Chemical mapping of a 177-nucleotide RNA with 2A3.

RNA sequence: GGGAACGACUCGAGUAGAGUCGAAAACAAACAAAAACAAAUCGUCAAAUGCGGUCAACCGUCAGAAUUUCGGGCGGAAUUACGACAUUAUACAGAAAGCCGGCCGCAAUGUCGUUUACAAACAAAAGAUGAGCAAUGUCUUCGGACAUUGCUCAUCAAAAGAAACAACAACAACAAC
Reactivity to 2A3 in 0.01 (KOAc 150mM, MgCl2 10mM, bicine 150mM(pH8.5), 24C), signal-to-noise 1, nucleotides 027 to 126: c050a000a070a000c070a030a110a190a000a000c050a070a110a050u050c010g050u000c080a150a000a000u150g000c000g010g010u000c000a020a020c000c000g010u020c000a000g160a210a250u090u070u300c010g040g000g040c080g070g090a120a230u010u140a030c130g000a000c000a000u000u010a070u150a240c100a040g060a010a010a010g020c050c020g020g000c000c000g000c010a000a000u000g000u000c000g000u000u100u240a250c240a070a190a000c110a150a110a020a000
The reactions ran in a buffer of 150 mM KOAc, 10 mM MgCl2 and 150 mM bicine (pH 8.5), at 24 C.